[RMDB]
RNA sequence: GGGAACGACUCGAGUAGAGUCGAAAACGCCAUCGGUUGUGGGACUGACCAGCAAUUGCGUGAAGCCCAGCAGCGGACCCGUUGGACCAGGUGCCUCCGCCACCGGUGGCUACAAGGUGCCUGAAUACGGCUCAUAUAAUUUCGAUUAUAUGAGCCGAAAAGAAACAACAACAACAAC
Reactivity to 2A3 in 0.01 (KOAc 150mM, MgCl2 10mM, bicine 150mM(pH8.5), 24C), signal-to-noise 5, nucleotides 027 to 126: c140g020c000c000a010u010c020g000g010u040u040g040u160g030g060g170a300c010u060g040a050c060c000a040g040c080a110a300u300u240g040c070g010u100g040a030a020g010c010c000c020a020g080c070a000g010c010g000g000a020c020c000c010g050u140u190g150g060a100c020c020a010g000g000u020g020c010c000u020c000c000g020c000c000a020c010c010g000g000u000g010g000c000u010a000c000a010a000g020g000u030g010c000c010u010g010a010a030u190a060
Reactivity to DMS in 0.01 (KOAc 150mM, MgCl2 10mM, bicine 150mM(pH8.5), 24C), signal-to-noise 3, nucleotides 027 to 126: c160g030c030c000a000u010c000g030g000u010u020g050u000g020g010g000a090c070u020g050a080c210c010a070g020c110a230a170u030u040g000c050g010u000g010a180a090g000c000c000c000a130g030c210a130g000c000g000g000a160c040c000c030g010u000u000g030g000a080c120c010a020g000g010u000g000c000c020u000c000c010g000c000c030a010c000c000g000g000u000g010g000c030u000a010c150a020a070g010g010u010g020c010c000u010g030a170a110u050a170
An RNA of 177 nucleotides, treated with 2A3 and DMS and read out base by base. The 2A3 profile rests on 3,784 reads. The reactions ran in a buffer of 150 mM KOAc, 10 mM MgCl2 and 150 mM bicine (pH 8.5), at 24 C. In probing experiments dimethyl sulfate is read out at A N1 and C N3, which are open when not base-paired. For DMS the reverse transcriptase was MarathonRT.